Source: RMDB library TTRDEL, as collected in RNAgym. Structure probing data (2A3 and DMS) for a 177-nucleotide construct. For DMS the reverse transcriptase was MarathonRT. For 2A3 the reverse transcriptase was SuperScript II with manganese. Conditions: 150 mM KOAc, 10 mM MgCl2 and 150 mM bicine (pH 8.5), 24 C. For DMS, 2,165 sequencing reads were counted.
[RMDB]
RNA sequence: GGGAACGACUCGAGUAGAGUCGAAAAGAUAUGGAUGACACGAAUCUGAUGUCGGAAACGACAUUCAGAAAUGUGUGUAUCCUAAGUCAAAGAGUGUUGACACAUCUUCGGAUGUGUCAACACUCAAGAAUGAUAUCCCCUUCGGGGGAUAUCAUUCAAAAGAAACAACAACAACAAC
Reactivity to 2A3 in 0.01 (KOAc 150mM, MgCl2 10mM, bicine 150mM(pH8.5), 24C), signal-to-noise 1, nucleotides 027 to 126: g030a020u120a070u160g010g000a020u010g040a000c000a010c010g060a100a120u010c010u010g030a010u000g000u000c010g030g000a040a050a020c000g000a000c000a010u240u160c000a030g000a010a030a050u110g010u000g030u020g020u030a000u010c000c000u040a290a000g150u050c070a130a060a000g010a010g000u010g000u000u030g000a000c000a000c010a000u010c000u070u130c300g020g010a000u000g000u030g000u000c010a030a010c020a000c030u000c000a000a000
Reactivity to DMS in 0.01 (KOAc 150mM, MgCl2 10mM, bicine 150mM(pH8.5), 24C), signal-to-noise 2, nucleotides 027 to 126: g000a050u010a300u010g000g010a020u000g010a000c000a010c010g000a110a230u000c000u000g000a000u000g000u000c000g020g000a100a100a170c010g000a010c000a010u000u000c010a000g000a000a060a070u040g010u010g010u000g000u010a030u000c000c000u010a060a140g000u010c040a120a070a120g010a020g040u000g010u010u000g000a000c000a000c010a000u000c010u000u000c210g040g000a010u000g010u000g000u010c000a000a010c000a000c000u000c000a000a040